[RMDB]
Structure probing data (2A3 and DMS) for a 207-nucleotide construct. For 2A3, 5,684 sequencing reads were counted. 2A3 adducts were read by reverse transcription with SuperScript II with manganese.

RNA sequence: GGGAACGACUCGAGUAGAGUCGAAAACGCGGCUGUUCUUCAUCGACAACAAGUCGGCCGACAUCAAGAGCCUGAACUACCAGAACGACCACUCGGACUACCUGACGAGCAUCGUGCAGAACAGCGACUUCACGCCGCUGGAGGCGGCCAACCAGAGAAUCACUGACUAAUUCGUUAGUCAGUGAUUAAAAGAAACAACAACAACAAC
Reactivity to 2A3 in 0.01 (KOAc 150mM, MgCl2 10mM, bicine 150mM(pH8.5), 24C), signal-to-noise 6, nucleotides 027 to 156: c130g020c040g100g000c010u010g010u070u030c020u070u040c020a090u150c040g040a020c020a200a000c020a130a000g020u020c000g030g000c020c010g050a040c020a080u160c090a110a030g040a040g080c010c020u080g050a140a090c040u100a110c100c050a030g030a120a030c050g050a050c040c030a030c070u030c020g000g060a080c060u060a120c040c060u080g030a030c010g020a010g030c030a050u040c020g020u010g000c010a000g000a020a010c000a000g030c000g020a020c010u080u090c030a020c080g010c010c010g000c040u070g120g090a070g160g000c000g010g000c000c020a040a050c030c020a020g040a010g070
Reactivity to DMS in 0.01 (KOAc 150mM, MgCl2 10mM, bicine 150mM(pH8.5), 24C), signal-to-noise 3, nucleotides 027 to 156: c090g020c060g020g050c010u000g010u010u000c010u000u000c010a100u010c050g020a080c030a120a120c050a050a110g010u000c030g010g000c050c030g020a110c120a130u010c070a080a110g010a090g000c020c010u000g000a080a110c080u010a170c120c040a200g010a110a140c050g010a080c020c050a070c060u010c030g000g000a170c030u000a090c110c020u010g010a150c010g020a080g010c050a110u000c040g000u000g020c080a150g010a060a070c010a020g010c010g000a010c010u000u000c100a120c100g040c000c020g020c030u010g010g000a110g020g000c000g010g000c020c040a030a090c030c040a130g000a190g000
High DMS reactivity at an A or C suggests that its Watson-Crick edge is free.